Structure probing data (DMS and 2A3) for a 177-nucleotide construct.
The DMS profile rests on 2,842 reads.
The reactions ran in a buffer of 150 mM KOAc, 10 mM MgCl2 and 150 mM bicine (pH 8.5), at 24 C.
RNA sequence: GGGAACGACUCGAGUAGAGUCGAAAAUGUGAGGGAGACUGUCCACAACCUGGCGCGACCCAGGUUCGACUGGGAGUGCCGCUACUGCCCGUACCGCAGGUACUGCCCAUACGUGAGGAGCCAGGAGCUAUGGUGCGUAGUUCGCUACGCACCAUAGAAAAGAAACAACAACAACAAC
Reactivity to DMS in 0.01 (KOAc 150mM, MgCl2 10mM, bicine 150mM(pH8.5), 24C), signal-to-noise 4, nucleotides 027 to 126: u000g010u000g030a110g000g010g020a130g010a090c090u000g020u000c010c030a070c150a070a110c050c030u010g000g010c040g010c080g000a140c090c020c010a040g000g000u010u010c140g000a120c100u000g010g010g010a300g010u000g000c040c010g000c080u030a050c080u000g020c050c030c050g000u000a040c100c120g010c040a040g010g040u000a040c030u000g010c030c020c010a130u000a050c120g000u010g010a090g000g020a100g000c040c040a070g020g030a160g010
Reactivity to 2A3 in 0.01 (KOAc 150mM, MgCl2 10mM, bicine 150mM(pH8.5), 24C), signal-to-noise 2, nucleotides 027 to 126: u140g030u030g030a120g030g090g010a090g030a100c040u070g070u110c030c000a030c020a100a070c020c010u000g000g020c020g000c080g100a270c000c000c000a010g020g000u090u110c070g090a110c030u010g030g000g000a050g000u000g010c030c010g000c000u050a040c050u090g030c000c010c040g030u020a070c020c040g060c030a050g030g020u050a030c010u140g130c020c030c010a050u120a050c140g070u050g080a080g010g020a010g010c000c020a010g000g000a010g020